[RMDB]
RNA sequence: GGGAACGACUCGAGUAGAGUCGAAAAACUGGACAAUGCAAGGAAGGGAAGUGUUCGGAUAGCUAUAAUCAUGUGUGCCAUGCUGUUAAGGAUAACCUUACAUUCUCUAGUUCAUUGGCUCGCAAGACCCGCAGAUAGGGUUCGCCCUAUCUGCGGGAAAAGAAACAACAACAACAAC
Reactivity to 2A3 in 0.01 (KOAc 150mM, MgCl2 10mM, bicine 150mM(pH8.5), 24C), signal-to-noise 1, nucleotides 027 to 126: a000c000u040g030g000a000c010a080a040u050g020c010a040a030g020g130a020a010g040g000g020a040a020g080u010g000u090u070c010g020g000a060u070a000g000c070u060a030u160a200a060u100c040a030u080g020u010g010u000g040c010c000a030u010g030c010u060g010u170u000a000a030g060g030a060u070a200a190c010c010u010u020a010c000a070u190u070c000u000c010u040a010g050u170u020c070a010u060u050g030g040c020u010c040g030c010a000a040g080a080
Reactivity to DMS in 0.01 (KOAc 150mM, MgCl2 10mM, bicine 150mM(pH8.5), 24C), signal-to-noise 1, nucleotides 027 to 126: a140c070u000g000g000a080c050a030a000u000g040c120a150a090g000g000a070a040g050g000g010a060a040g000u020g000u010u000c120g010g000a140u000a040g010c050u000a040u000a030a050u000c010a170u000g000u000g010u000g010c080c040a080u010g000c170u000g000u000u030a070a140g010g000a160u010a090a070c030c040u000u010a070c040a040u000u000c170u030c060u000a180g030u000u000c020a120u000u000g000g010c140u000c070g050c130a020a130g000a120

Source: RMDB library OK2TRN, as collected in RNAgym. Chemical mapping of a 177-nucleotide RNA with 2A3 and DMS. The reactions ran in a buffer of 150 mM KOAc, 10 mM MgCl2 and 150 mM bicine (pH 8.5), at 24 C.